Background:
Conditions: 150 mM KOAc, 10 mM MgCl2 and 150 mM bicine (pH 8.5), 24 C. An RNA of 207 nucleotides, treated with DMS and 2A3 and read out base by base. For DMS, 2,596 sequencing reads were counted. For DMS the reverse transcriptase was MarathonRT. The data come from the RNA Mapping Database (RMDB), library OK3TST. For 2A3 the reverse transcriptase was SuperScript II with manganese. Reactivities are given for positions 27 through 156. The 2A3 profile rests on 4,618 reads.

RNA sequence: GGGAACGACUCGAGUAGAGUCGAAAAGGCCAUUGUGUUUCUCACAGCACACAACCACACAUGGUGAAUGUGCUCCUCCUUGCGAAAGGGCCAGAGAGCAGAGAGAUGCUUCAGGCCACACAGCCAGACACAGGCACUGACAUAUACACAGGCACUAGUCCUGAUAAUGAUUCGUCAUUAUCAGGACAAAAGAAACAACAACAACAAC
Reactivity to DMS in 0.01 (KOAc 150mM, MgCl2 10mM, bicine 150mM(pH8.5), 24C), signal-to-noise 2, nucleotides 027 to 156: g020g010c010c010a240u000u000g030u010g060u000u000u000c010u000c070a210c130a110g010c000a040c000a000c020a250a110c010c030a030c170a130c210a180u010g000g020u000g000a150a070u000g000u000g000c020u000c050c020u000c010c000u000u000g010c140g030a130a050a050g030g000g050c020c050a070g010a140g000a090g060c030a200g000a100g000a110g040a090u000g020c040u000u010c050a180g030g020c010c020a070c060a060c010a090g010c000c000a080g020a160c060a030c050a060g010g070c000a060c000u000g000a040c070a060u000a100u000a150c060a030c070a040g000g000c000a040c120u020a140
Reactivity to 2A3 in 0.01 (KOAc 150mM, MgCl2 10mM, bicine 150mM(pH8.5), 24C), signal-to-noise 5, nucleotides 027 to 156: g020g000c010c020a060u050u060g010u010g020u030u070u010c040u000c010a050c020a020g000c010a000c000a000c010a040a050c020c010a070c020a030c020a260u210g020g020u020g040a160a100u050g010u020g010c000u020c010c000u010c000c000u030u020g030c020g080a250a040a030g050g020g000c000c010a010g040a000g000a000g000c190a010g020a000g000a000g010a050u020g010c010u060u070c070a040g010g000c010c000a010c010a010c010a010g030c000c010a030g040a050c020a030c020a090g040g000c070a040c080u050g030a020c030a030u140a010u090a090c050a000c010a040g210g040c260a020c090u190a040